[RMDB]
RNA sequence: GGGAACGACUCGAGUAGAGUCGAAAACUUAGGUCUUCGGACCUAAGAAAAAGAUAUGGAAUGUGAAGUAGACGCCAUGGCGUUGAAAUCGGAAACGAUGGAGCCAUGGGCGUCGAAACACAUUCCUAAGUCAAAAACUUGCGGUUCGCCGCAAGAACAGAGUAAGUAGGUUCGCCUACUUACUCUGAAAAGAAACAACAACAACAAC
Reactivity to DMS in 0.01 (KOAc 150mM, MgCl2 10mM, bicine 150mM(pH8.5), 24C), signal-to-noise 2, nucleotides 027 to 156: c000u000u000a000g020g030u000c010u010u000c300g090g010a020c000c000u000a000a020g000a080a060a160a060a180g000a140u000a300u010g000g020a050a020u000g030u000g000a020a080g010u000a140g000a010c040g020c010c000a000u010g020g060c000g010u020u010g000a040a110a060u010c040g000g030a200a140a270c050g010a010u000g000g010a300g010c000c000a020u010g020g020g020c000g020u000c010g010a140a110a120c010a030c010a050u010u000c010c000u000a010a060g020u000c050a070a050a080a100a120c010u000u010g020c000g030g020u000u020c300g050c010c000g000c020a020a010g040a170a190
Reactivity to 2A3 in 0.01 (KOAc 150mM, MgCl2 10mM, bicine 150mM(pH8.5), 24C), signal-to-noise 4, nucleotides 027 to 156: c000u000u010a000g000g000u000c010u030u070c300g120g000a010c000c010u020a000a000g010a010a040a010a000a000g060a030u080a020u100g010g000a000a000u000g010u010g020a000a010g010u010a000g000a010c000g000c000c000a000u010g000g000c010g210u300u050g020a030a040a000u000c020g020g050a060a030a070c010g000a000u010g020g020a010g000c000c000a010u020g130g000g000c010g000u000c010g000a000a000a000c000a000c000a010u000u000c000c000u000a010a000g010u000c010a000a010a050a120a160c000u020u020g000c000g020g120u030u090c300g040c090c010g000c010a000a000g000a000a020